[RMDB]
RNA sequence: GGGAACGACUCGAGUAGAGUCGAAAAGGGGUUAGCGUUUGCAAAACGCUGUUAUUGCAAUGAUCUGGAUUUAGCGCAAGUAGGUCCGAAAUCCAGAUCAACAUUUCGGACCUCCGCCCUAAUAAAAAGACAUACAUUUGUUCGCAAAUGUAUGUCUAAAAGAAACAACAACAACAAC
Reactivity to 2A3 in 0.01 (KOAc 150mM, MgCl2 10mM, bicine 150mM(pH8.5), 24C), signal-to-noise 4, nucleotides 027 to 126: g010g020g010g010u050u060a000g010c010g010u010u050u190g160c080a110a080a010a000c020g000c060u020g050u070u100a190u090u080g030c050a040a060u030g000a010u010c000u000g000g020a020u030u090u120a090g020c050g000c030a050a080g130u110a040g200g030u050c030c020g010a010a000a000u000c000c000a010g000a000u010c000a000a000c000a000u020u050u050c020g020g000a000c000c000u010c010c020g040c000c000c000u070a180a140u120a100a100a020a030
Reactivity to DMS in 0.01 (KOAc 150mM, MgCl2 10mM, bicine 150mM(pH8.5), 24C), signal-to-noise 6, nucleotides 027 to 126: g010g000g000g010u000u000a020g020c010g020u000u000u000g030c270a090a060a030a020c010g000c020u000g000u000u000a050u010u000g020c060a100a070u010g000a020u000c000u000g000g010a060u000u000u000a110g020c280g010c060a090a110g020u010a060g030g010u000c070c000g000a030a030a040u000c010c010a020g000a020u000c010a020a060c100a040u000u000u000c040g010g000a040c010c000u000c060c090g000c040c010c000u000a070a090u020a050a070a080a090